[RMDB]
RNA sequence: GGGAACGACUCGAGUAGAGUCGAAAAUGGAGUCUGGCCCUUGCCUGUCUCAGUACUGUUUCAGGCUGUUGCCCUCAGACCCCGCCAUGCCUUCCAGGGUCAAGAAAGGCAUGUGAGCAGGCAGCUUGAGCUCCCUGUCACGUGUAGACAGUGAGAACAGUAUCGAUACUUUCGAGUAUCGAUACUGAAAAGAAACAACAACAACAAC
Reactivity to DMS in 0.01 (KOAc 150mM, MgCl2 10mM, bicine 150mM(pH8.5), 24C), signal-to-noise 2, nucleotides 027 to 156: u000g020g020a050g020u000c020u010g000g000c000c020c030u000u000g030c020c020u010g010u010c020u010c060a090g020u000a130c090u000g020u000u000u000c030a040g000g000c030u000g020u000u000g010c030c020c060u000c050a100g010a090c010c000c010c010g000c060c030a030u010g010c000c020u000u000c020c010a160g010g010g000u000c120a140a140g010a010a040a030g010g000c000a030u000g010u000g010a090g020c040a120g010g030c020a090g000c030u000u010g000a110g020c020u000c030c020c000u000g000u010c000a140c090g050u020g020u010a130g000a040c010a060g000u000g010a080g010a130a300
Reactivity to 2A3 in 0.01 (KOAc 150mM, MgCl2 10mM, bicine 150mM(pH8.5), 24C), signal-to-noise 4, nucleotides 027 to 156: u090g040g020a030g030u030c030u050g060g000c000c030c020u030u130g010c010c000u070g030u060c000u000c030a060g090u160a100c130u080g020u030u030u070c010a010g010g000c050u060g080u060u120g020c000c050c000u040c010a060g030a250c000c010c020c000g000c000c010a000u020g000c000c000u040u050c040c040a080g140g000g020u100c060a060a060g060a090a030a000g050g000c000a000u010g050u070g010a040g010c060a030g070g000c020a010g000c000u060u080g030a020g020c000u020c030c010c000u010g010u020c010a060c110g090u130g050u110a060g010a020c010a020g030u030g080a030g030a100a030